RNA sequence: GGGAACGACUCGAGUAGAGUCGAAAACAAACGCAAAAUUAGAUACAAUUAACACGAGCAUUGGAACAGUGAAUACGAGUGUCGGAACUGUUAAUACAACACUAGGAACAUUAAUAUUAGGACAAGGAUCAUUAACACGGUUCGCCGUGUUAAUGAUAAAAGAAACAACAACAACAAC
Reactivity to DMS in 0.01 (KOAc 150mM, MgCl2 10mM, bicine 150mM(pH8.5), 24C), signal-to-noise 4, nucleotides 027 to 126: c030a060a110a150c170g010c120a060a040a120a070u010u020a040g000a080u020a080c110a080a070u000u010a050a070c050a060c070g010a120g000c050a050u000u000g020g010a040a070c050a040g010u000g010a070a080u000a070c070g020a050g010u000g010u010c030g030g000a050a090c110u000g020u000u000a030a060u000a040c100a070a040c050a020c090u000a050g000g000a090a100c060a030u010u000a040a070u000a060u000u000a070g000g000a040c070a060a100g020g010
Reactivity to 2A3 in 0.01 (KOAc 150mM, MgCl2 10mM, bicine 150mM(pH8.5), 24C), signal-to-noise 4, nucleotides 027 to 126: c000a010a050a000c070g000c080a070a030a040a090u140u060a080g030a070u080a150c040a060a070u110u070a100a010c030a000c080g040a040g020c040a040u040u130g020g030a050a010c000a040g030u050g110a040a030u150a090c040g020a040g080u100g040u030c000g010g040a010a000c000u020g020u060u060a020a010u080a080c080a100a010c010a040c090u070a030g040g040a030a010c030a010u060u050a080a080u100a100u190u170a040g040g030a030c030a050a030g170g010